[RMDB]
RNA sequence: GGGAACGACUCGAGUAGAGUCGAAAACAUUAUCCACUCUGCAGGGCCGCCCUGCUGAUCUCAGGGGACGCGUCCAGCUCUCUACCCUGUGCUCCCCGUCCCGUUUUCUCUUCUGUUGGGACUCAGAAAACAGGAAGAAAGGUCUCAGGUCGAGUGAGCCAUAAUUGCGAUUCGUCGCAAUUAUGGCAAAAGAAACAACAACAACAAC
Reactivity to 2A3 in 0.01 (KOAc 150mM, MgCl2 10mM, bicine 150mM(pH8.5), 24C), signal-to-noise 1, nucleotides 027 to 156: c050a010u210u150a140u210c000c000a050c080u100c050u040g080c080a060g000g010g020c090c000g060c060c030c000u030g020c110u110g100a130u080c060u000c040a000g040g020g000g010a150c120g020c080g040u000c030c060a010g010c010u020c000u000c040u070a050c000c010c010u000g020u040g030c020u050c050c000c000c000g030u000c000c000c010g010u000u000u140u030c040u010c010u080u040c070u070g140u130u290g120g030g010a020c010u020c090a020g010a010a020a000a040c030a010g090g020a000a050g100a050a090a000g000g000u000c060u010c040a000g030g010u020c020g020a010g010u000g000a010
The data come from the RNA Mapping Database (RMDB), library OK3TST. This 207-nucleotide RNA was probed chemically with 2A3. The reactions ran in a buffer of 150 mM KOAc, 10 mM MgCl2 and 150 mM bicine (pH 8.5), at 24 C. Reactivities are given for positions 27 through 156.